Chemical mapping of a 177-nucleotide RNA with DMS and 2A3.
For 2A3, 785 sequencing reads were counted.
The RNA was probed in 150 mM KOAc, 10 mM MgCl2 and 150 mM bicine (pH 8.5) at 24 C.
RNA sequence: GGGAACGACUCGAGUAGAGUCGAAAACGGCGUAUUGGCGGGAUAGCCACCGGCGAUUAAGCGCUCGGCAACGCGGUCCAUUUCCUGUACCGACAAGAAAAUCGCCAUUGACGUUUGAUGGGCGGCGGCCCCGCAUCAUAUUCGUAUGAUGCGGGGCAAAAGAAACAACAACAACAAC
Reactivity to DMS in 0.01 (KOAc 150mM, MgCl2 10mM, bicine 150mM(pH8.5), 24C), signal-to-noise 1, nucleotides 027 to 126: c090g000g080c080g010u000a070u000u000g050g020c030g040g030g020a160u000a170g020c000c090a040c180c060g020g000c010g020a050u000u000a070a140g020c090g020c150u000c080g040g000c230a110a120c140g000c030g000g000u000c010c040a090u000u000u000c020c080u000g020u000a100c010c010g000a060c080a060a130g000a070a050a100a140u030c000g020c020c020a200u020u000g000a040c030g000u000u000u000g000a030u000g010g000g040c020g030g000c070g020
Reactivity to 2A3 in 0.01 (KOAc 150mM, MgCl2 10mM, bicine 150mM(pH8.5), 24C), signal-to-noise 1, nucleotides 027 to 126: c000g040g030c060g060u090a030u080u140g050g040c050g080g000g050a150u290a060g040c040c040a070c060c030g020g000c000g000a010u120u060a050a060g090c000g000c190u180c090g070g000c040a130a000c060g060c090g050g000u060c070c000a040u010u100u020c010c010u010g030u050a180c000c020g070a160c130a020a080g100a110a130a010a030u040c010g000c030c030a060u040u160g080a060c040g020u050u060u110g130a060u010g000g070g020c090g060g000c000g010
Annotation: For DMS, 888 sequencing reads were counted. The data come from the RNA Mapping Database (RMDB), library OK2TRN.